Chemical mapping of a 177-nucleotide RNA with DMS and 2A3. The 2A3 profile rests on 1,127 reads. Reactivities are given for positions 27 through 126. The data come from the RNA Mapping Database (RMDB), library M2PK50. The reactions ran in a buffer of 150 mM KOAc, 10 mM MgCl2 and 150 mM bicine (pH 8.5), at 24 C.
RNA sequence: GGGAACGACUCGAGUAGAGUCGAAAAUCUUAUAUGUUCGCAUAUAAGAAAAGGCGGAGUAGUGUUGGGUCGCGAAAGGCCAUAAAUUAAGAAUCACUCAGAUACAGACCUGGUUCGCCAGGUCUAAGUAAUCAGACAGAUUCGUCUGUCUGAUUACAAAAGAAACAACAACAACAAC
Reactivity to DMS in 0.01 (KOAc 150mM, MgCl2 10mM, bicine 150mM(pH8.5), 24C), signal-to-noise 4, nucleotides 027 to 126: u000c000u000u010a000u010a000u000g010u000u000c160g020c010a010u000a010u000a010a010g000a020a070a100a130g010g010c030g010g010a080g000u000a100g010u010g010u010u010g010g010g010u000c030g020c030g000a120a100a120g000g000c010c020a050u000a030a050a130u010u000a080a080g000a130a070u000c120a060c070u010c060a090g010a160u010a080c220a030g000a010c000c000u000g000g010u000u020c240g010c000c000a000g000g010u000c000u000a020a070
Reactivity to 2A3 in 0.01 (KOAc 150mM, MgCl2 10mM, bicine 150mM(pH8.5), 24C), signal-to-noise 1, nucleotides 027 to 126: u020c000u010u010a000u000a000u000g040u050u030c100g010c080a000u000a000u030a060a020g020a030a230a020a020g020g000c000g010g040a000g040u020a020g000u020g080u140u120g040g070g090u060c000g000c000g020a060a010a000g070g000c000c000a030u210a010a120a010u120u180a100a010g060a070a010u070c030a030c130u110c020a020g020a200u100a180c090a000g000a000c000c010u020g040g000u050u040c110g000c040c030a000g000g000u010c000u000a010a000